Conditions: 150 mM KOAc, 10 mM MgCl2 and 150 mM bicine (pH 8.5), 24 C.
Structure probing data (DMS and 2A3) for a 207-nucleotide construct.
Values cover nucleotides 27 to 156.
DMS adducts were read by reverse transcription with MarathonRT.
Reactivities are rounded to 0.1 and cut off at 0 and 3.

RNA sequence: GGGAACGACUCGAGUAGAGUCGAAAAUUCAAUAACCUUCACUGGUUAAUGCUUAGAAAAGGAAUUGACAUGGUAGUCAAGGUGAUCACCAGUCAGCAGACAAUUGAGACUACUGUUCUCACCUUGAACAAGGUGUUAGGGGCAUUAUACAGGUGAGCGACGUCUUAUAAUUCGUUAUAAGACGUCGAAAAGAAACAACAACAACAAC
Reactivity to DMS in 0.01 (KOAc 150mM, MgCl2 10mM, bicine 150mM(pH8.5), 24C), signal-to-noise 3, nucleotides 027 to 156: u010u000c080a080a110u000a090a090c070c010u000u000c080a090c030u010g020g020u000u000a030a030u000g020c030u020u000a090g010a060a130a140a170g040g010a060a100u010u010g020a030c010a080u000g010g000u000a110g030u000c000a050a110g020g020u010g010a050u000c000a080c060c050a090g020u000c040a080g010c060a160g020a120c120a080a150u010u000g010a300g030a210c030u000a060c040u010g000u010u000c120u000c000a050c010c010u000u010g010a060a090c050a060a080g030g040u010g010u000u000a070g020g000g000g030c000a040u000u000a070u010a080c040a040g060g010u000g000a110g050
Reactivity to 2A3 in 0.01 (KOAc 150mM, MgCl2 10mM, bicine 150mM(pH8.5), 24C), signal-to-noise 7, nucleotides 027 to 156: u130u040c060a040a100u090a150a090c010c010u060u040c030a020c070u030g020g040u040u030a020a020u020g000c010u100u140a070g120a120a140a040a040g140g050a200a180u100u060g010a030c030a040u080g080g060u140a080g020u020c000a000a020g030g000u020g000a040u090c030a000c080c000a020g020u070c020a030g050c020a020g120a240c110a150a240u150u200g030a070g030a080c030u010a000c010u050g040u070u030c020u000c020a000c000c000u010u020g020a120a050c040a080a040g120g000u020g010u060u050a050g030g020g010g000c000a000u010u040a030u050a080c050a030g100g030u050g020a010g050